[RMDB]
RNA sequence: GGGAACGACUCGAGUAGAGUCGAAAAGUAAAUGCUGUCCAGACAAAAGAUCGGCAAUACCUGCACCUAAAAAGGAACCAAUCACUAGUCCCGGUGCUAAAUUACGAAAAACAGGCCAGAGGACUGACCAUAAAUACGGUUUCGACCGUAUUUAUGGAAAAGAAACAACAACAACAAC
Reactivity to DMS in 0.01 (KOAc 150mM, MgCl2 10mM, bicine 150mM(pH8.5), 24C), signal-to-noise 6, nucleotides 027 to 126: g010u000a060a110a130u000g010c020u000g020u000c010c040a110g010a100c170a100a090a110a090g010a040u000c060g010g000c030a040a110u000a070c050c020u010g000c060a040c030c020u000a020a050a050a090a070g000g010a080a060c050c050a060a060u010c080a070c120u020a070g000u000c010c000c000g020g000u000g020c040u000a030a060a120u020u010a100c150g010a050a050a060a120a080c140a090g010g010c020c030a080g020a130g010g010a040c050u000g000a180
Reactivity to 2A3 in 0.01 (KOAc 150mM, MgCl2 10mM, bicine 150mM(pH8.5), 24C), signal-to-noise 6, nucleotides 027 to 126: g020u030a010a120a120u090g010c010u010g030u010c020c010a060g050a160c070a070a120a020a010g040a060u110c050g010g000c010a010a050u020a080c010c000u020g020c030a070c010c020u100a090a110a040a010a010g050g020a020a030c030c020a040a070u120c040a020c120u050a010g010u000c000c010c000g020g020u110g010c000u020a040a090a090u130u080a050c070g100a020a060a030a050a050c040a030g010g000c010c010a020g060a150g070g000a010c000u020g030a020

Chemical mapping of a 177-nucleotide RNA with DMS and 2A3. For DMS the reverse transcriptase was MarathonRT. The reactions ran in a buffer of 150 mM KOAc, 10 mM MgCl2 and 150 mM bicine (pH 8.5), at 24 C.